[RMDB]
RNA sequence: GGGAACGACUCGAGUAGAGUCGAAAAUUAAUACUGCUACAUUUUUAAGACCCUUAGUUAUUUAACUUUACCGCCCAGGAUGGGGUGCAGCGUUCCUGCAAUAUCCAGGGCACCUAGGUGCAGCCUUCAUGCCUCAUGCCGUUCGCGGCAUGAGGAAGUUGAUCUCUAGGUUCGCCUAGAGAUCAACAAAAGAAACAACAACAACAAC
Reactivity to 2A3 in 0.01 (KOAc 150mM, MgCl2 10mM, bicine 150mM(pH8.5), 24C), signal-to-noise 2, nucleotides 027 to 156: u060u040a080a050u040a170c050u020g040c010u110a070c060a220u120u110u060u110u230a160a100g040a080c010c000c020u040u090a010g010u030u070a180u210u160u160a120a020c020u050u040u010a020c050c000g010c000c000c000a000g010g000a010u020g000g060g010g030u030g010c000a000g010c020g070u130u040c000c000u020g000c010a010a040u000a010u170c000c000a000g000g000g000c000a060c000c030u090a020g070g000u100g030c010a020g060c000c020u110u080c050a140u190g030c010c000u000c000a000u000g000c000c010g000u020u020c240g000c070g070g000c010a000u000g000a000g020g000a000a000
About this RNA: Structure probing data (2A3) for a 207-nucleotide construct. It was measured as part of the RMDB library M2RFPK.